[RMDB]
RNA sequence: GGGAACGACUCGAGUAGAGUCGAAAACACUCAUUCGACGGGGAUCAGGAAGAAAUCUUCCAGUCACUUAUCAGUGACGCCCUCGAUCAAGCAUCACUCAACCACACAGAAGGGGGCACCAUGCCCGAUCUCGCACAUGCCGACGGCAAGACGGUCAGCGGAAUAAUAGAUUCGUCUAUUAUUCCGCAAAAGAAACAACAACAACAAC
Reactivity to DMS in 0.01 (KOAc 150mM, MgCl2 10mM, bicine 150mM(pH8.5), 24C), signal-to-noise 2, nucleotides 027 to 156: c110a060c070u000c050a170u000u000c050g060a070c080g050g010g030g000a200u000c070a150g060g000a060a040g010a140a160a150u000c000u000u000c010c010a300g010u000c040a040c010u000u000a110u020c190a090g010u000g010a020c010g000c040c040c010u000c040g000a100u000c110a060a060g000c050a070u000c040a090c030u020c010a080a140c020c020a110c040a160c030a070g010a110a120g000g000g010g020g030c020a060c080c080a110u010g020c020c020c040g010a030u000c010u000c040g020c000a060c040a070u000g020c020c000g000a240c080g000g000c010a040a100g000a070c070g000g020u000c030a200
Reactivity to 2A3 in 0.01 (KOAc 150mM, MgCl2 10mM, bicine 150mM(pH8.5), 24C), signal-to-noise 5, nucleotides 027 to 156: c060a010c020u060c030a080u120u090c060g020a020c050g020g000g010g040a060u120c080a060g040g020a030a030g020a050a270a060u080c020u030u000c000c010a020g020u000c000a000c000u120u290a130u300c150a020g000u010g000a000c020g040c030c020c000u000c000g040a060u030c040a040a070g060c010a040u100c030a030c070u070c020a050a120c070c010a070c030a020c010a080g120a070a090g090g030g000g000g000c030a040c080c050a090u160g020c000c020c010g050a090u010c030u020c040g060c000a050c000a070u120g080c020c010g060a090c040g030g030c040a050a040g050a030c050g040g010u080c080a000

Structure probing data (DMS and 2A3) for a 207-nucleotide construct.
For DMS, 2,548 sequencing reads were counted.
For 2A3, 3,188 sequencing reads were counted.